Description:
An RNA of 207 nucleotides, treated with DMS and 2A3 and read out base by base. The RNA was probed in 150 mM KOAc, 10 mM MgCl2 and 150 mM bicine (pH 8.5) at 24 C. The data come from the RNA Mapping Database (RMDB), library M2RFPK. For DMS the reverse transcriptase was MarathonRT.
RNA sequence: GGGAACGACUCGAGUAGAGUCGAAAAUCGGACGGCGGCCAUGAGUCGCAACGCAAAGCCGCGGCAAGUGGAGUUAGCGAGAAGAGACUAGGCUUUGGUUUCUCCAAGUGAAGCGGUCACCAAUCAGAAUAGCUUGCGCAGUUCGCUGCGCAAGCAACUGCAAAUUAGUAUUCGUACUAAUUUGCAGAAAAGAAACAACAACAACAAC
Reactivity to DMS in 0.01 (KOAc 150mM, MgCl2 10mM, bicine 150mM(pH8.5), 24C), signal-to-noise 1, nucleotides 027 to 156: u000c080g020g040a300c040g010g010c030g000g000c000c010a220u000g010a290g050u000c010g000c000a030a020c060g020c070a160a070a250g000c050c010g000c110g010g020c020a030a140g000u000g030g000a150g000u010u000a190g040c100g020a220g010a060a080g000a180g020a060c110u010a040g020g010c100u000u000u000g030g030u000u010u010c000u000c020c000a060a280g020u000g010a070a080g030c000g000g040u010c060a120c030c010a070a120u010c060a180g000a150a140u000a170g000c000u010u000g020c020g000c050a080g000u000u030c300g000c020u000g020c020g000c000a040a040g010c000a010a010
Reactivity to 2A3 in 0.01 (KOAc 150mM, MgCl2 10mM, bicine 150mM(pH8.5), 24C), signal-to-noise 3, nucleotides 027 to 156: u120c000g020g100a020c040g100g000c000g010g010c020c020a180u220g000a020g050u000c010g000c010a020a050c030g010c080a100a080a020g020c030c010g010c030g030g000c010a050a000g060u010g010g030a020g000u140u110a020g070c030g050a050g000a160a020g040a020g030a040c090u100a080g050g110c040u050u020u070g030g000u060u080u030c020u000c010c010a030a050g020u020g080a040a000g000c020g000g040u050c020a020c070c030a050a070u170c060a020g160a190a150u120a080g000c000u000u010g000c000g000c000a000g000u030u110c160g030c140u000g000c000g000c000a010a000g000c000a000a000